[RMDB]
RNA sequence: GGGAACGACUCGAGUAGAGUCGAAAAGUAUACACAGUGUGAAGUUUUUGAAAACUGGAUCCUCUAACACUGGACAUCUGAGAGAGAUGCUCUUUUCAAAGAUCACUAUUUACAUCCAACUAUGGGCUCCUCCCACCAGGUUCGCCUGGUGGGAGGAAAAAGAAACAACAACAACAAC
Reactivity to 2A3 in 0.01 (KOAc 150mM, MgCl2 10mM, bicine 150mM(pH8.5), 24C), signal-to-noise 1, nucleotides 027 to 126: g000u000a000u070a130c140a000c000a000g050u040g000u020g290a150a300g070u090u000u000u100u160g090a060a040a000a020c120u120g020g030a070u000c030c000u030c000u010a080a080c070a040c070u050g090g010a080c080a030u000c080u300g000a000g000a000g000a000g000a050u050g270c040u000c000u000u000u040u000c050a050a060a060g000a050u090c000a000c070u080a120u090u250u000a080c100a030u030c000c000a000a000c100u100a300u220g000g080g000c000
Chemical mapping of a 177-nucleotide RNA with 2A3.